RNA sequence: GGGAACGACUCGAGUAGAGUCGAAAAAUUCUUGUGACCCUUGGCGUCGGUCAUGACACUAUUGCAGAGGAACUGCUCAGCAGAACACUUCCCAACACAACGUUCUACGGAGCCGACCCAAUUUAUAGUAAUGACCAUGAUUCGUCAUGGUCAUUACAAAAGAAACAACAACAACAAC
Reactivity to 2A3 in 0.01 (KOAc 150mM, MgCl2 10mM, bicine 150mM(pH8.5), 24C), signal-to-noise 4, nucleotides 027 to 126: a000u080u040c040u060u160g040u060g120a070c000c020c000u000u050g060g000c080g030u030c040g000g030u080c020a060u090g020a010c020a010c080u120a100u230u150g000c060a030g040a120g100g040a070a040c010u000g000c020u050c100a060g000c020a020g000a090a020c040a020c060u050u020c000c020c020a070a030c050a010c020a040a140c060g020u060u030c020u060a060c040g070g010a030g000c010c010g020a020c000c010c010a050a060u110u200u060a230u080a070
Reactivity to DMS in 0.01 (KOAc 150mM, MgCl2 10mM, bicine 150mM(pH8.5), 24C), signal-to-noise 4, nucleotides 027 to 126: a090u010u010c050u010u000g020u010g010a130c040c020c040u000u010g000g020c150g010u000c130g010g020u000c060a070u000g010a060c110a070c090u010a050u010u000g010c060a080g010a160g020g000a070a090c070u010g010c010u010c050a080g000c110a030g000a030a040c040a110c190u010u000c030c020c020a110a080c170a040c110a060a090c190g000u000u000c040u010a090c080g010g010a080g010c000c010g000a120c010c000c020a080a070u010u000u010a060u000a150